[RMDB]
RNA sequence: GGGAACGACUCGAGUAGAGUCGAAAAAGACUGAUUAACGAAUUGAAUCCAGCUUGAUAUUACACGAUUUAAUCUGAUAUCAGUUCAAUAACGAGGCCGUAAAGGACGUAGAUUAAUACGUGCUCAAGAAUGUCUGAUUUUUCGAAAUCAGGUAUUCAAAAGAAACAACAACAACAAC
Reactivity to DMS in 0.01 (KOAc 150mM, MgCl2 10mM, bicine 150mM(pH8.5), 24C), signal-to-noise 9, nucleotides 027 to 126: a090g000a030c010u000g000a030u000u010a110a240c210g000a040a040u000u000g000a010a020u000c020c120a140g020c160u020u020g010a120u040a090u030u020a110c120a120c270g000a040u000u000u000a010a010u000c010u000g000a170u020a020u000c010a010g000u010u000c060a060a070u030a060a080c110g000a080g000g010c020c020g010u020a050a080a060g000g000a020c030g000u000a020g000a140u030u030a060a080u010a020c020g010u000g010c020u000c100a070a100
Reactivity to 2A3 in 0.01 (KOAc 150mM, MgCl2 10mM, bicine 150mM(pH8.5), 24C), signal-to-noise 9, nucleotides 027 to 126: a000g030a010c010u010g000a020u030u010a070a040c060g020a040a120u020u030g020a010a000u010c020c020a020g050c100u080u100g080a040u080a080u170u170a080c100a010c090g010a010u010u010u020a010a010u000c010u010g020a010u010a010u150c010a010g020u060u050c010a030a020u040a040a010c050g000a060g040g060c040c010g040u060a040a080a060g060g010a010c010g010u020a010g010a070u060u100a060a020u030a030c010g000u030g020c000u010c030a030a040